[RMDB]
RNA sequence: GGGAACGACUCGAGUAGAGUCGAAAAGCCGCACGCCCUCGCCGCCGUCGACGAGCGCGUCGGCCGCGCACACGAAGCGCGCGUCGCCAUCGCCCGUCAUGCGUGCUCCCGCAGCCAGCCGGCGAGACCUAGUAGGAUGCUUCGGCAUCCUACUAGGAAAAGAAACAACAACAACAAC
Reactivity to 2A3 in 0.01 (KOAc 150mM, MgCl2 10mM, bicine 150mM(pH8.5), 24C), signal-to-noise 2, nucleotides 027 to 126: g040c020c040g030c020a020c040g040c030c060c000u000c030g020c030c000g030c010c050g120u160c100g010a020c020g020a030g010c020g000c010g020u020c000g000g000c000c030g000c000g010c020a030c000a040c210g270a300a090g000c010g000c010g000c060g040u030c010g040c020c010a130u160c020g000c000c000c000g010u000c010a050u120g020c010g000u050g000c020u040c000c010c000g040c010a020g060c030c100a020g060c080c020g000g000c000g010a010g000a010
Reactivity to DMS in 0.01 (KOAc 150mM, MgCl2 10mM, bicine 150mM(pH8.5), 24C), signal-to-noise 2, nucleotides 027 to 126: g020c110c090g040c040a030c090g020c050c130c030u000c000g020c030c010g030c070c050g030u000c070g030a010c030g030a030g010c130g040c300g000u000c030g030g020c070c010g000c000g030c000a090c070a130c250g000a130a070g030c000g010c010g010c080g010u000c030g020c020c040a110u000c030g010c000c020c020g010u000c010a110u000g020c050g020u000g000c030u000c030c030c020g030c040a090g000c040c080a070g020c110c050g000g010c040g020a050g010a290